Source: RMDB library M2RFPK, as collected in RNAgym. The record gives the reactivity of an RNA of 207 nucleotides to 2A3. Reactivities are given for positions 27 through 156.
RNA sequence: GGGAACGACUCGAGUAGAGUCGAAAAACGAAACCCAAGGUGCAUGCCGAGGUGCGGUAGGCCUCGUUAGCAAACCGCAAAAAAAUAGUCGCAAACGACGAAAACUACGCACUCGCAGCUUAAUAACAGUAGGGUCCCUACUUCGGUAGGGACCCAAGCAAAUACGAGGAUUCGUCCUCGUAUUUGCAAAAGAAACAACAACAACAAC
Reactivity to 2A3 in 0.01 (KOAc 150mM, MgCl2 10mM, bicine 150mM(pH8.5), 24C), signal-to-noise 1, nucleotides 027 to 156: a020c040g030a040a050a020c030c000c020a000a000g080g000u030g030c160a100u010g040c200c000g000a030g000g090u020g020c020g000g050u030a000g000g000c000c000u010c000g060u020u000a010g020c160a140a130a030c170c000g000c050a000a170a000a000a020a090a090u070a080g060u140c080g010c060a180a100a000c010g010a000c060g050a000a020a100a000c040u030a000c000g000c000a000c000u070c010g070c040a000g040c020u120u100a130a020u260a260a170c100a010g110u170a130g050g050g000u020c000c000c000u000a000c000u030u130c230g110g000u000a010g000g000g000a000c000c000c000a000a000